Structure probing data (DMS and 2A3) for a 177-nucleotide construct. Values cover nucleotides 27 to 126. For 2A3 the reverse transcriptase was SuperScript II with manganese. The reactions ran in a buffer of 150 mM KOAc, 10 mM MgCl2 and 150 mM bicine (pH 8.5), at 24 C. The data come from the RNA Mapping Database (RMDB), library TTRDEL.

[RMDB]
RNA sequence: GGGAACGACUCGAGUAGAGUCGAAAAGAUAUGGAGACACCACCGGGAGCCAUUCGGAAACGAAUGAGCAUCGAUCGGUGUUGUCUCCUAAGUCAAAGUUAGGUAAUCCUUCGGGAUUACCUAACAAUCUCACAGACAUGUUCGCAUGUCUGUGAGAAAAAGAAACAACAACAACAAC
Reactivity to DMS in 0.01 (KOAc 150mM, MgCl2 10mM, bicine 150mM(pH8.5), 24C), signal-to-noise 1, nucleotides 027 to 126: g000a010u000a030u010g030g000a030g000a000c000a010c120c010a020c000c000g080g000g000a050g010c000c000a020u000u000c010g010g000a030a020a050c000g000a010a020u000g000a130g000c010a070u000c000g000a060u000c000g020g030u000g010u010u000g000u000c000u000c000c000u000a000a050g000u000c010a110a130a120g010u000u000a000g010g000u000a010a000u010c000c000u000u000c220g050g010g010a020u000u000a000c010c000u000a000a000c010a090a160
Reactivity to 2A3 in 0.01 (KOAc 150mM, MgCl2 10mM, bicine 150mM(pH8.5), 24C), signal-to-noise 1, nucleotides 027 to 126: g000a000u010a010u070g000g010a000g010a000c000a000c030c020a010c050c040g260g190g040a000g000c020c000a010u020u000c010g000g000a000a000a000c000g040a000a000u090g020a050g070c020a170u080c000g150a300u280c010g030g000u020g000u000u000g000u010c000u000c000c000u000a010a000g010u020c020a140a050a020g020u010u010a000g000g020u010a010a000u020c000c000u040u200c300g000g030g000a020u000u000a010c000c010u010a010a000c010a000a010